[RMDB]
RNA sequence: GGGAACGACUCGAGUAGAGUCGAAAAGAUAUGGAAGAGGGUAGACUGAGACUAUAUGGAUCGGAAACGAUCCAUACGAAUCUCAAUCUAUGAAGCUCUUCCUAAGUCAAAGGUGUCUUCGGACACCGUAAACACGAUAGUUCGCUAUCGUGUUUACAAAAGAAACAACAACAACAAC
Reactivity to 2A3 in 0.01 (KOAc 150mM, MgCl2 10mM, bicine 150mM(pH8.5), 24C), signal-to-noise 8, nucleotides 027 to 126: g010a010u090a040u170g000g000a010a010g010a010g040g210g010u020a010g000a010c010u010g000a000g000a010c080u030a020u000a000u120g010g000a000u010c020g020g030a060a060a020c020g000a010u000c010c000a000u000a000c000g090a250a300u000c000u000c000a000a010u000c000u010a030u070g230a230a060g090c010u000c000u010u000c000c000u020a100a020g020u020c080a240a110a040g000g000u010g000u000c020u050u140c300g140g010a000c000a000c000c000
Reactivity to DMS in 0.01 (KOAc 150mM, MgCl2 10mM, bicine 150mM(pH8.5), 24C), signal-to-noise 9, nucleotides 027 to 126: g010a050u000a300u010g000g010a010a010g010a020g020g000g020u000a000g020a020c060u000g010a020g010a020c060u010a240u000a000u000g000g000a020u000c000g010g000a100a080a230c010g000a000u000c000c000a000u000a000c120g010a060a130u000c000u000c000a010a020u000c000u000a010u000g010a160a240g020c000u000c000u000u000c000c000u000a020a100g000u000c070a080a120a170g010g010u000g000u000c000u000u010c240g030g000a010c000a000c000c000